[RMDB]
RNA sequence: GGGAACGACUCGAGUAGAGUCGAAAAGGACUGCGCAGUCCGUCAACAUCAGCAGAGAGCCCGCUAUACGUGACGGAUUGGCUGAAGCGUACAGAAAUAUUGAGCCUCCUGCAAGAGGCAGCCAAGCAAAACGUACGUGAGUUCGCUCACGUACGAAGAUAAGUAAUAACUUCGGUUAUUACUUAUCAAAAGAAACAACAACAACAAC
Reactivity to DMS in 0.01 (KOAc 150mM, MgCl2 10mM, bicine 150mM(pH8.5), 24C), signal-to-noise 4, nucleotides 027 to 156: g000g020a090c020u000g010c050g040c060a080g010u000c010c000g000u000c020a030a070c100a120u000c060a080g030c010a090g030a190g020a140g010c050c010c030g010c060u000a150u010a050c080g000u000g020a110c020g000g020a130u000u010g020g000c000u010g010a060a220g030c040g040u000a160c050a090g000a040a090a130u010a160u010u010g010a170g010c000c010u000c010c010u010g010c100a130a080g010a050g030g000c010a050g010c040c020a080a140g040c100a030a030a110a190c020g030u000a020c010g010u010g010a000g030u000u010c300g020c010u000c000a000c010g000u010a010c000g020a000a060
Reactivity to 2A3 in 0.01 (KOAc 150mM, MgCl2 10mM, bicine 150mM(pH8.5), 24C), signal-to-noise 9, nucleotides 027 to 156: g040g020a040c050u060g010c110g000c040a010g020u000c010c000g000u000c000a030a100c010a090u170c060a010g000c040a010g090a010g030a040g190c020c050c040g000c020u060a060u030a120c130g020u020g010a000c000g000g010a010u010u030g030g000c010u040g040a070a010g030c020g040u060a030c050a040g170a090a130a020u260a090u130u160g040a040g010c000c000u010c010c040u120g080c050a100a040g000a000g030g000c000a010g010c010c020a040a030g020c060a040a060a030a050c010g000u000a000c000g000u000g000a000g000u060u140c210g000c080u000c000a000c000g000u000a000c000g000a010a000